This 177-nucleotide RNA was probed chemically with 2A3 and DMS. Source: RMDB library OK1LIB, as collected in RNAgym. 2A3 adducts were read by reverse transcription with SuperScript II with manganese. The DMS profile rests on 4,767 reads. As a SHAPE reagent, 2A3 marks flexible, mostly unpaired nucleotides at the ribose 2'-OH. The 2A3 profile rests on 2,927 reads. For DMS the reverse transcriptase was MarathonRT.
RNA sequence: GGGAACGACUCGAGUAGAGUCGAAAAUUGAGUUCUGGCCCGCCAACACCGCGGUAAACAUCGAUGCGGCCGGCACCAAGUCGAGCUUCCGGACCGGUGAUUCGCUGGUGGCCACCGCCGACGACGCUAGGAGAUAAGUCUUCGGACUUAUCUCCUAAAAAGAAACAACAACAACAAC
Reactivity to 2A3 in 0.01 (KOAc 150mM, MgCl2 10mM, bicine 150mM(pH8.5), 24C), signal-to-noise 4, nucleotides 027 to 126: u080u160g030a050g010u060u020c030u030g050g000c010c020c000g010c010c020a060a040c030a020c030c020g010c040g030g080u110a080a020a070c040a060u060c040g110a120u140g020c000g010g030c020c030g050g000c030a030c010c030a090a030g080u160c050g030a010g000c040u200u060c010c010g090g080a090c040c060g010g010u050g060a220u060u060c030g000c030u020g030g000u040g010g020c010c000a020c020c000g000c010c010g030a030c010g010a010c030g010c080
Reactivity to DMS in 0.01 (KOAc 150mM, MgCl2 10mM, bicine 150mM(pH8.5), 24C), signal-to-noise 3, nucleotides 027 to 126: u050u020g000a110g020u010u010c000u030g000g000c010c040c040g010c070c010a110a150c110a070c050c100g000c060g000g000u010a020a070a070c100a090u010c070g010a120u000g010c150g000g000c060c080g010g000c020a110c020c020a030a110g010u020c070g000a050g020c090u000u010c000c010g040g020a090c170c060g020g010u000g000a080u020u000c060g000c020u020g000g000u010g000g010c030c040a140c020c040g000c010c010g020a020c050g000a070c080g000c110